[RMDB]
RNA sequence: GGGAACGACUCGAGUAGAGUCGAAAAUGACGUCGUUUCGACGACGUCAACAUAAAAUCAGCGGUAAAUAAUUAGGAGGCGUUACCGCUGAACGCCUGCAUACGAGAGGGCUAUUCGUAGCCCUCAACUCCUUAACAUUGUUCGCAAUGUUAAGGAGAAAAGAAACAACAACAACAAC
Reactivity to 2A3 in 0.01 (KOAc 150mM, MgCl2 10mM, bicine 150mM(pH8.5), 24C), signal-to-noise 5, nucleotides 027 to 126: u050g000a000c000g000u010c010g000u010u060u100c220g070a020c000g010a000c000g000u000c000a000a010c010a010u150a010a100a010a100u030c010a010g000c000g060g040u080a050a080a080u140a110a160u210u200a130g170g030a020g010g070c030g020u000u010a050c010c000g000c000u000g000a000a000c010g010c000c010u050g060c080a090u120a190c080g020a030g000a000g230g010g000c000u010a010u020u070c170g050u020a000g000c000c000c000u000c000a000a000
Reactivity to DMS in 0.01 (KOAc 150mM, MgCl2 10mM, bicine 150mM(pH8.5), 24C), signal-to-noise 7, nucleotides 027 to 126: u010g010a000c000g010u010c000g020u000u000u010c150g020a030c010g010a010c000g020u010c000a010a040c170a070u000a060a070a090a100u000c000a010g010c000g000g000u000a020a040a060u010a080a130u000u010a120g010g010a070g010g020c130g010u000u000a020c010c010g000c000u000g000a010a020c120g010c010c000u000g020c180a110u010a090c240g010a150g000a010g000g000g010c000u010a010u000u010c210g010u000a000g010c000c000c000u000c000a010a060

This 177-nucleotide RNA was probed chemically with 2A3 and DMS. The data come from the RNA Mapping Database (RMDB), library M2PK50. Conditions: 150 mM KOAc, 10 mM MgCl2 and 150 mM bicine (pH 8.5), 24 C. High DMS reactivity at an A or C suggests that its Watson-Crick edge is free. For 2A3 the reverse transcriptase was SuperScript II with manganese.